[RMDB]
RNA sequence: GGGAACGACUCGAGUAGAGUCGAAAAAUAUUACUGAUCCAUCAGGAGAGGUCAUUGCCAAAGGAACAUUUGAUAAAGCGACUAAGCAAAUCACAUAUACAUUUACAGAUUAUGUAGAUAAAUAUGACUCAAUCACCCGGUUCGCCGGGUGAUUGAGAAAAGAAACAACAACAACAAC
Reactivity to 2A3 in 0.01 (KOAc 150mM, MgCl2 10mM, bicine 150mM(pH8.5), 24C), signal-to-noise 1, nucleotides 027 to 126: a000u240a000u090u020a020c000u000g000a000u040c060c000a130u220c190a300g160g040a000g000a040g060g000u000c000a000u000u300g050c000c000a070a000a300g080g000a000a150c020a000u040u000u300g060a060u130a070a290a000g030c000g000a020c070u090a030a010g170c040a270a290a000u190c070a090c000a060u070a000u000a000c000a000u020u020u000a000c000a000g210a280u000u300a090u300g000u000a020g070a000u110a040a300a000u000a000u020g040a060